[RMDB]
RNA sequence: GGGAACGACUCGAGUAGAGUCGAAAAGAUUCCUCGUUGUUGAGCGCGGUUUAAACAAAUCGACCACACAAACGUAGAGCCGACUACGGAUUUAUAAAUUAAGGCAUUAAGUGUGAUAAGGAGACAAAAAACGAUGUUGUGUUCGCACAACAUCGAACUUAUAUUAAGCCUUCGGGCUUAAUAUAAGAAAAGAAACAACAACAACAAC
Reactivity to DMS in 0.01 (KOAc 150mM, MgCl2 10mM, bicine 150mM(pH8.5), 24C), signal-to-noise 2, nucleotides 027 to 156: g010a300u000u010c000c000u000c180g010u000u000g020u000u000g000a160g010c090g020c050g000g030u000u000u000a060a090a160c100a020a060a100u020c050g010a050c040c020a020c020a120c000a160a090a070c010g010u000a050g000a190g020c070c030g020a100c030u010a040c000g010g010a230u010u000u000a050u010a050a020a090u000u000a020a080g010g020c030a230u000u010a070a090g000u000g000u000g020a080u000a030a160g040g010a190g000a080c060a000a020a040a160a070a140c040g000a050u000g000u000u010g020u030g020u000u010c300g020c000a000c010a000a020c010a000u000c000g010a020a070
The data come from the RNA Mapping Database (RMDB), library M2RFPK. Chemical mapping of a 207-nucleotide RNA with DMS. The RNA was probed in 150 mM KOAc, 10 mM MgCl2 and 150 mM bicine (pH 8.5) at 24 C.